RNA sequence: GGGAACGACUCGAGUAGAGUCGAAAACGAUAAGCAUUCGUGCUUAUCGACGGUACGAAAGUACAAAGGAGCAAAAGCAUCGGCUCCUAAAAACGAUGCAAAAGACAACGGGGUUCGCCCCGUUGAAAUCCUUUUACUAGUUCGCUAGUAAAAGGAUAAAAGAAACAACAACAACAAC
Reactivity to 2A3 in 0.01 (KOAc 150mM, MgCl2 10mM, bicine 150mM(pH8.5), 24C), signal-to-noise 5, nucleotides 027 to 126: c000g000a010u000a010a000g000c010a010u050u110c200g090u040g010c000u000u000a000u000c000g010a010c040g090g000u000a000c010g030a140a040a030g000u010a010c030a040a220a060g000g000a000g000c020a050a070a200a040g000c000a020u000c000g020g000c000u010c010c020u060a030a020a000a000a000c010g000a000u010g000c000a140a000a030a000g090a020c000a010a000c000g020g000g010g010u030u060c110g110c000c000c000c000g000u000u000g000a000a000
Reactivity to DMS in 0.01 (KOAc 150mM, MgCl2 10mM, bicine 150mM(pH8.5), 24C), signal-to-noise 6, nucleotides 027 to 126: c020g010a000u000a000a010g010c000a030u000u010c170g020u000g010c000u000u000a000u000c000g020a070c200g010g010u000a000c000g000a130a090a170g010u000a000c000a120a150a160g000g000a000g010c010a090a060a090a140g000c000a000u000c000g030g010c000u000c000c010u010a010a020a010a010a040c000g010a010u000g010c000a080a050a140a110g010a200c010a000a010c000g020g000g000g020u000u010c250g000c000c000c000c000g000u000u000g000a020a100
Chemical mapping of a 177-nucleotide RNA with 2A3 and DMS.
Conditions: 150 mM KOAc, 10 mM MgCl2 and 150 mM bicine (pH 8.5), 24 C.
For 2A3, 19,927 sequencing reads were counted.